[RMDB]
RNA sequence: GGGAACGACUCGAGUAGAGUCGAAAAGUAAAGGCGGAGGAGGGUUUUGGCUUGCGCUCGGUCCGCCCGCGCGUGGUGUGGGCUGGAAUUCGUGUGUGGAGGAUGAUUAAUGCCGCGCGCCGAGGAAGGUAUGCUCCUUAUUCGUAAGGAGCAUACCAAAAGAAACAACAACAACAAC
Reactivity to 2A3 in 0.01 (KOAc 150mM, MgCl2 10mM, bicine 150mM(pH8.5), 24C), signal-to-noise 2, nucleotides 027 to 126: g040u040a000a110a000g010g000c040g010g060a040g040g000a020g030g100g000u030u030u090u130g050g020c070u050u080g000c080g040c010u000c030g060g150u010c000c010g000c000c020c010g000c010g000c010g060u090g080g000u060g010u040g030g080g030c060u070g040g100a050a070u100u050c040g010u070g030u060g010u080g150g060a030g080g000a040u040g010a000u060u140a130a040u130g010c000c000g000c000g000c000g000c010c020g000a040g050g090a090a020
Reactivity to DMS in 0.01 (KOAc 150mM, MgCl2 10mM, bicine 150mM(pH8.5), 24C), signal-to-noise 2, nucleotides 027 to 126: g010u000a070a060a100g000g010c030g000g000a040g000g000a070g000g020g010u000u000u000u010g020g010c060u000u000g020c020g000c010u010c030g000g010u010c000c020g000c010c000c020g010c040g040c050g020u000g000g020u000g020u000g010g010g010c030u010g010g000a130a090u000u000c020g020u020g020u000g020u010g000g000a130g010g020a120u010g010a090u010u000a100a060u010g010c020c010g020c060g000c020g010c010c040g010a060g000g010a130a110
Structure probing data (2A3 and DMS) for a 177-nucleotide construct. Values cover nucleotides 27 to 126. DMS adducts were read by reverse transcription with MarathonRT. It was measured as part of the RMDB library M2PK90. Conditions: 150 mM KOAc, 10 mM MgCl2 and 150 mM bicine (pH 8.5), 24 C.